[RMDB]
An RNA of 207 nucleotides, treated with 2A3 and read out base by base. The RNA was probed in 150 mM KOAc, 10 mM MgCl2 and 150 mM bicine (pH 8.5) at 24 C. The 2A3 profile rests on 1,006 reads.

RNA sequence: GGGAACGACUCGAGUAGAGUCGAAAAGGGGUCGAGCGCCGUUCAGCCCACGCUUUUGACGGUCUGAAGCCUCCACGGACCGAUAAGCGUGGGAACUACUGAACGUGGUCGCUCGACGGAGGCACCCAAAACUGCUCUUGGUUCGCCAAGAGCAGAAGCUUAACCCCUACUUCGGUAGGGGUUAAGCAAAAGAAACAACAACAACAAC
Reactivity to 2A3 in 0.01 (KOAc 150mM, MgCl2 10mM, bicine 150mM(pH8.5), 24C), signal-to-noise 1, nucleotides 027 to 156: g090g000g000g010u020c010g010a000g000c000g040c060c000g020u000u010c000a010g000c000c000c000a000c000g020c020u150u270u190u120g270a120c020g000g020u000c000u010g070a140a020g000c020c000u020c000c000a030c000g000g030a010c020c000g040a060u060a120a090g020c000g000u000g020g000g060a000a000c020u300a060c010u000g000a000a020c010g000u040g000g160u180c000g000c000u000c000g000a000c020g000g000a020g000g010c010a020c000c000c030a010a130a000a040c010u020g020c000u000c000u010u020g030g010u030u110c120g100c150c000a010a000g040a000g000c020a000g000a050a000